[RMDB]
RNA sequence: GGGAACGACUCGAGUAGAGUCGAAAAGAUAUGGACGUCAGUAGGGAGGUGAUCGGAAACGAUCAUACCGACGAUCUACGACGUCCUAAGUCAAAGUUGAAGAUGGGGUUCGCCCCAUCUUCAACAACAGACUUGAACAGUUCGCUGUUCAAGUCUGAAAAGAAACAACAACAACAAC
Reactivity to DMS in 0.01 (KOAc 150mM, MgCl2 10mM, bicine 150mM(pH8.5), 24C), signal-to-noise 3, nucleotides 027 to 126: g010a060u000a300u000g000g000a000c000g010u000c010a100g010u000a000g000g000g000a030g050g030u000g000a000u010c000g000g000a090a120a170c000g000a000u000c010a100u010a040c020c000g000a070c230g010a030u010c010u000a000c000g010a000c000g030u000c000c000u000a000a060g000u000c020a080a110a100g010u000u000g000a010a010g000a010u000g000g000g000g010u000u000c290g020c000c010c000c000a000u000c000u010u000c000a000a000c000a100a180
This 177-nucleotide RNA was probed chemically with DMS.
For DMS, 3,111 sequencing reads were counted.
The reactions ran in a buffer of 150 mM KOAc, 10 mM MgCl2 and 150 mM bicine (pH 8.5), at 24 C.
Source: RMDB library TTRDEL, as collected in RNAgym.